Source: RMDB library OK2TRN, as collected in RNAgym. An RNA of 177 nucleotides, treated with 2A3 and DMS and read out base by base. 2A3 adducts were read by reverse transcription with SuperScript II with manganese.

[RMDB]
RNA sequence: GGGAACGACUCGAGUAGAGUCGAAAACGAUCAGACGAGAUGGCCAACAGAGUGGAUGUCUAAGCCCAAACUGGUGUCCAGGGUGACGGCGGGCGAAGAAUUCAUCCUCAGCGUCCCCGGCUCGUCACCUCGUACGGAGGUUCGCCUCCGUACGAGGAAAAGAAACAACAACAACAAC
Reactivity to 2A3 in 0.01 (KOAc 150mM, MgCl2 10mM, bicine 150mM(pH8.5), 24C), signal-to-noise 1, nucleotides 027 to 126: c030g020a060u150c070a020g020a020c000g000a000g030a040u130g010g060c010c000a040a010c000a060g070a010g130u060g020g000a030u050g070u180c060u100a010a040g000c000c020c000a080a090a140c050u090g000g130u140g060u090c000c020a170g220g020g040u230g000a000c030g040g200c000g000g030g000c040g000a040a000g010a040a010u200u000c030a080u100c000c000u030c070a020g030c000g010u050c000c000c030c020g020g020c000u040c000g000u010c000a010
Reactivity to DMS in 0.01 (KOAc 150mM, MgCl2 10mM, bicine 150mM(pH8.5), 24C), signal-to-noise 1, nucleotides 027 to 126: c130g000a090u010c160a040g000a000c030g000a080g030a260u000g010g010c090c040a100a170c170a050g000a110g000u000g000g000a010u000g030u020c090u000a100a300g000c030c000c010a020a070a030c110u030g010g010u010g020u020c000c030a100g000g030g080u010g010a010c010g010g010c180g010g010g020c110g000a040a050g010a050a050u030u060c080a070u010c090c010u000c120a110g020c040g000u000c000c040c000c020g010g020c000u000c020g010u000c000a230

Background: For 2A3, 1,132 sequencing reads were counted.